An RNA of 177 nucleotides, treated with DMS and read out base by base.
The reactions ran in a buffer of 150 mM KOAc, 10 mM MgCl2 and 150 mM bicine (pH 8.5), at 24 C.
For DMS, 935 sequencing reads were counted.
Reactivities are given for positions 27 through 126.
For DMS the reverse transcriptase was MarathonRT.
Values are in units of 0.01, from 0 to 300, in steps of 10.
[RMDB]
RNA sequence: GGGAACGACUCGAGUAGAGUCGAAAAGUUGCGACCUUCGGGUCGCAACAAAUACCGAGGUACAUGCUCGCUAGAAUGUACAAACCCUUGGAAACAAGGGAAAAAGCUUAACCUUCGGGUUAAGCAACAAAAGUAGCGAGUUCGCUCGCUACUUUUGAAAAGAAACAACAACAACAAC
Reactivity to DMS in 0.01 (KOAc 150mM, MgCl2 10mM, bicine 150mM(pH8.5), 24C), signal-to-noise 1, nucleotides 027 to 126: g000u010u000g000c000g000a010c000c000u000u020c170g010g010g070u010c000g000c000a000a010c000a010a080a060u000a200c010c010g010a060g000g010u010a030c030a010u000g010c060u000c220g000c160u030a080g010a060a050u000g000u000a030c040a140a140a090c000c000c000u000u000g000g000a210a110a110c010a020a030g000g000g000a000a030a080a140a070g010c000u000u000a000a010c000c010u000u010c100g030g000g000u000u000a000a000g000c000a040a020